[RMDB]
Source: RMDB library OK2TRN, as collected in RNAgym. The record gives the reactivity of an RNA of 177 nucleotides to 2A3 and DMS. For 2A3 the reverse transcriptase was SuperScript II with manganese. For DMS, 1,440 sequencing reads were counted. For 2A3, 814 sequencing reads were counted.
RNA sequence: GGGAACGACUCGAGUAGAGUCGAAAACAUGGAGUACAAUCUCUGUUCUCUUGGUUGCAUUUAACAAUACCUCUUGUCACAAUAAUAUGUACAUAUAGACAUGCACCUCCUUUCAUAAAGGAUCAUGUAUAUGGGUACGGUUCGCCGUACCCAUAUAAAAAGAAACAACAACAACAAC
Reactivity to 2A3 in 0.01 (KOAc 150mM, MgCl2 10mM, bicine 150mM(pH8.5), 24C), signal-to-noise 1, nucleotides 027 to 126: c030a050u090g030g000a060g080u140a090c070a040a300u070c110u030c030u090g060u040u000c000u000c000u010u090g070g000u030u030g060c050a050u140u080u050a160a040c030a060a070u060a090c010c000u100c040u030u060g060u010c070a000c040a050a040u070a050a050u110a050u210g030u030a000c050a000u090a020u040a210g010a000c040a030u050g030c000a030c010c010u020c020c010u040u090u110c090a080u250a140a060a000g020g000a020u150c030a010u080g000
Reactivity to DMS in 0.01 (KOAc 150mM, MgCl2 10mM, bicine 150mM(pH8.5), 24C), signal-to-noise 2, nucleotides 027 to 126: c070a030u000g000g000a010g010u010a010c120a090a120u010c090u000c070u000g000u000u000c020u000c010u000u020g030g000u010u000g000c040a050u010u000u020a030a120c160a100a110u020a120c070c030u000c090u000u010g010u010c090a060c050a060a040u010a090a110u010a090u020g000u000a060c030a020u000a030u000a070g030a080c040a020u000g010c150a030c070c040u000c020c000u000u000u000c220a080u020a120a030a040g000g010a070u000c050a050u010g020